[RMDB]
RNA sequence: GGGAACGACUCGAGUAGAGUCGAAAAAGCGAGUGAACACUCCUAGAAAAUAGGAGUGAAACCGAGCUUAAACACUCGCAAGUAGUUUGGCUCGGCAUAGCAUAGCUAUGCAAAUUUUGACUACAAAGAUGCCACUGAAGUUCGCUUCAGUGGCAUCAAAAGAAACAACAACAACAAC
Reactivity to 2A3 in 0.01 (KOAc 150mM, MgCl2 10mM, bicine 150mM(pH8.5), 24C), signal-to-noise 2, nucleotides 027 to 126: a000g040c000g000a000g000u010g000a090a050c010a000c000u020c000c000u030a050g110a070a300a020a030u020a010g010g010a010g000u010g000a000a000a000c010c010g000a000g000c000u030u070a050a010a000c000a000c000u010c000g000c000a000a050g020u040a020g010u000u050u070g050g000c000u000c000g000g000c000a000u000a000g000c050a180u040a140g020c000u000a010u000g000c010a030a030a030u150u160u040u050g010a020c000u010a040c010a020a120a010